Structure probing data (DMS and 2A3) for a 177-nucleotide construct. The data come from the RNA Mapping Database (RMDB), libraries RFM100 and RFMREP. Reactivities are given for positions 27 through 126. The RNA was probed in 150 mM KOAc, 10 mM MgCl2 and 150 mM bicine (pH 8.5) at 24 C.

RNA sequence: GGGAACGACUCGAGUAGAGUCGAAAAACGAAAUUUUAUCCAUCGCACACAUGUUCGCAUGUGUUUGCGUAUGGUGCAAUUGAAAUUUCAUUAGGUUGCCUAAUUUGGGUAACAAGUGCAGUGCGUCGUCCAAUGUCCAAUUCGUUGGACAUUGGACAAAAGAAACAACAACAACAAC
Reactivity to DMS in 0.01 (KOAc 150mM, MgCl2 10mM, bicine 150mM(pH8.5), 24C), signal-to-noise 2, nucleotides 027 to 126: a060c160g010a010a020a000u000u020u000u010a070u020c000c000a010u010c000g000c000a060c010a000c000a000u000g020u010u070c170g030c010a000u010g000u000g000u050u010u040g030c000g010u080a010u000g000g030u000g000c200a110a090u020u000g000a050a030a020u000u000u000c000a110u020u010a090g010g000u000u000g010c000c010u000a090a110u060u020u030g020g000g000u040a020a000c010a100a040g010u020g000c060a040g020u020g000c110g000u000c100
Reactivity to 2A3 in 0.01 (KOAc 150mM, MgCl2 10mM, bicine 150mM(pH8.5), 24C), signal-to-noise 2, nucleotides 027 to 126: a010c070g000a000a010a000u020u040u020u040a050u050c010c000a000u010c000g010c000a000c000a000c000a000u020g030u050u110c160g030c110a000u010g030u000g000u040u080u120g010c000g040u080a020u010g000g030u030g000c090a060a110u060u090g030a000a010a020u010u050u010c020a020u010u120a070g080g030u000u010g010c000c000u100a270a300u100u160u290g000g000g010u010a010a020c060a070a050g150u080g060c070a050g080u020g090c030g040u060c020